Notes: Chemical mapping of a 177-nucleotide RNA with 2A3 and DMS. The DMS profile rests on 1,748 reads. DMS adducts were read by reverse transcription with MarathonRT. The reactions ran in a buffer of 150 mM KOAc, 10 mM MgCl2 and 150 mM bicine (pH 8.5), at 24 C.
RNA sequence: GGGAACGACUCGAGUAGAGUCGAAAAUCGAUCAUGUCGAUCGGUACCAUGUGCCAUGGGAUCGUGAUGCGUAUGUCAUCAGGAUCGUACCUAGAUCUAGUCGUACGACAUGUGUGCUGAUGCUGCGGUGCCCACUAUCGUUCGCGAUAGUGGGCACAAAAGAAACAACAACAACAAC
Reactivity to 2A3 in 0.01 (KOAc 150mM, MgCl2 10mM, bicine 150mM(pH8.5), 24C), signal-to-noise 4, nucleotides 027 to 126: u030c010g000a010u030c050a080u230g240u300c090g010a030u000c000g000g010u020a050c000c020a040u090g050u090g020c000c060a110u080g040g040g030a020u040c070g100u040g050a070u040g050c050g030u220a090u270g100u190c010a020u010c010a010g110g030a030u000c020g020u030a040c000c000u100a100g010a300u130c050u060a040g080u100c050g000u040a030c010g020a030c040a050u100g060u000g010u020g070c010u030g010a020u050g020c030u050g030c020g020
Reactivity to DMS in 0.01 (KOAc 150mM, MgCl2 10mM, bicine 150mM(pH8.5), 24C), signal-to-noise 2, nucleotides 027 to 126: u000c050g000a040u000c050a110u010g030u000c080g000a040u010c040g000g000u010a120c010c010a040u000g000u020g000c030c050a110u010g000g000g000a050u000c010g000u010g000a030u000g000c020g020u000a070u010g030u000c010a010u000c020a060g000g010a090u000c010g020u000a020c050c050u020a090g020a100u000c160u000a060g010u000c200g000u000a050c040g010a120c040a030u000g000u000g020u010g020c050u020g000a080u000g000c030u010g000c090g010